Source: RMDB library RFM100, as collected in RNAgym. Structure probing data (DMS and 2A3) for a 177-nucleotide construct. For 2A3 the reverse transcriptase was SuperScript II with manganese. For 2A3, 1,095 sequencing reads were counted.
RNA sequence: GGGAACGACUCGAGUAGAGUCGAAAAAGCGGAUGGAUUACGAUCCAUCCGCAUCCCUGUUGACGGAAUGAACGGAAUUCAGUAGCGAUAACUGAGCAGGGAAGCGUACCAGUACGCUGGUACGCAAACGGGGCUGAAAUUUCGAUUUCAGCCCCGUAAAAGAAACAACAACAACAAC
Reactivity to DMS in 0.01 (KOAc 150mM, MgCl2 10mM, bicine 150mM(pH8.5), 24C), signal-to-noise 1, nucleotides 027 to 126: a050g010c010g000g050a000u000g000g000a020u000u000a090c110g000a140u000c000c000a000u020c050c000g000c020a050u000c000c000c000u000g000u000u000g000a120c010g030g010a020a240u030g000a250a060c000g010g000a080a300u050u000c000a000g000u030a000g030c030g020a070u000a050a000c010u000g000a000g020c030a030g000g000g000a100a070g000c000g030u000a000c000c000a110g010u010a030c100g020c000u000g000g050u000a000c000g000c000a010a020
Reactivity to 2A3 in 0.01 (KOAc 150mM, MgCl2 10mM, bicine 150mM(pH8.5), 24C), signal-to-noise 2, nucleotides 027 to 126: a000g010c050g040g010a000u020g010g010a000u020u050a140c190g050a020u000c000c000a000u000c000c000g040c000a040u000c000c010c010u000g010u090u010g060a000c010g030g020a300a300u020g000a050a000c000g000g000a030a000u070u010c000a020g000u000a000g000c010g020a000u010a010a000c010u030g000a000g000c000a000g010g010g010a020a000g000c000g010u000a000c010c000a000g000u050a030c290g010c070u000g000g000u000a000c000g010c030a050a000